RNA sequence: GGGAACGACUCGAGUAGAGUCGAAAAAUUGACGAAGACGCUAAUCUUUCACAAAUUAAGGCUAGAAAAUCAGUUUUGGAAUCUCGAUUUUCUCGUCUUGAAGAAGCCUUUCGAGAUUUCUACAUCAUCCAGCAUUAUUAUUCGUAAUAAUGCUGGAAAAAGAAACAACAACAACAAC
Reactivity to 2A3 in 0.01 (KOAc 150mM, MgCl2 10mM, bicine 150mM(pH8.5), 24C), signal-to-noise 3, nucleotides 027 to 126: a000u010u030g010a000c020g010a010a000g010a020c070g030c030u060a120a040u020c010u030u210u190c060a050c020a090a190a080u180u140a050a060g000g000c010u010a000g020a000a020a020a010u020c030a010g030u000u040u230u240g170g070a100a050u050c000u000c060g000a010u000u000u000u050c010u000c010g040u000c000u020u070g000a020a010g000a010a000g020c020c000u000u020u030c030g020a060g010a050u020u040u040c040u090a160c030a130u160c000a050
Reactivity to DMS in 0.01 (KOAc 150mM, MgCl2 10mM, bicine 150mM(pH8.5), 24C), signal-to-noise 6, nucleotides 027 to 126: a050u000u010g000a240c230g010a030a030g010a070c120g010c080u000a040a080u010c030u000u010u000c110a120c100a240a070a110u010u020a030a020g010g010c010u000a000g000a020a030a050a040u000c040a040g000u000u010u000u010g010g010a060a040u000c000u010c110g000a020u000u010u000u000c020u000c090g010u010c060u000u000g000a050a040g010a080a050g010c150c090u000u000u010c030g000a300g000a040u000u000u000c030u010a080c130a110u010c140a150